[RMDB]
This 207-nucleotide RNA was probed chemically with 2A3 and DMS.
RNA sequence: GGGAACGACUCGAGUAGAGUCGAAAAGAAAGAAGGCGUAAUCGCCGUGUACGAGCUCCACGAUCAAUGAUUUUCUCGCCUAACGGCAUUGAUCGGACGUACCUCGGAUUGCCGCCUUACAAAGUUAAUACUAGAUUAAAUAAACCGUUUAGGCAAAGCACUGAUUUAUGUUCGCAUAAAUCAGUGCAAAAGAAACAACAACAACAAC
Reactivity to 2A3 in 0.01 (KOAc 150mM, MgCl2 10mM, bicine 150mM(pH8.5), 24C), signal-to-noise 4, nucleotides 027 to 156: g110a020a160a010g060a010a010g000g000c000g020u040a030a040u080c080g020c100c060g050u000g000u010a020c010g010a040g090c090u130c130c060a120c010g000a000u000c010a010a000u020g070a050u030u020u200u080c150u100c080g000c000c000u000a000a000c000g010g000c010a000u000u000g000a000u000c000g010g010a020c010g000u000a000c000c060u080c010g000g000a010u020u070g020c030c050g000c000c000u010u030a030c030a020a100a010g030u090u190a090a070u060a160c040u060a030g100a210u230u170a090a120a170u130a120a100a040c000c010g000u040u010u080a010g000g010c000a000a020a000
Reactivity to DMS in 0.01 (KOAc 150mM, MgCl2 10mM, bicine 150mM(pH8.5), 24C), signal-to-noise 1, nucleotides 027 to 156: g010a130a120a130g000a050a060g000g030c010g060u000a030a100u000c030g020c000c060g000u000g000u000a070c030g010a230g010c230u000c070c090a070c000g020a030u000c050a060a020u010g000a240u000u000u000u000c130u000c060g000c010c030u010a040a050c070g010g040c000a030u090u000g010a030u000c000g000g010a290c010g020u000a070c040c050u030c020g040g010a100u000u010g030c070c010g000c080c010u000u010a170c050a070a080a060g000u000u000a050a090u010a110c050u000a200g010a180u000u000a060a100a160u000a060a130a110c010c010g040u000u010u000a020g000g050c000a090a050a170
2A3 adducts were read by reverse transcription with SuperScript II with manganese.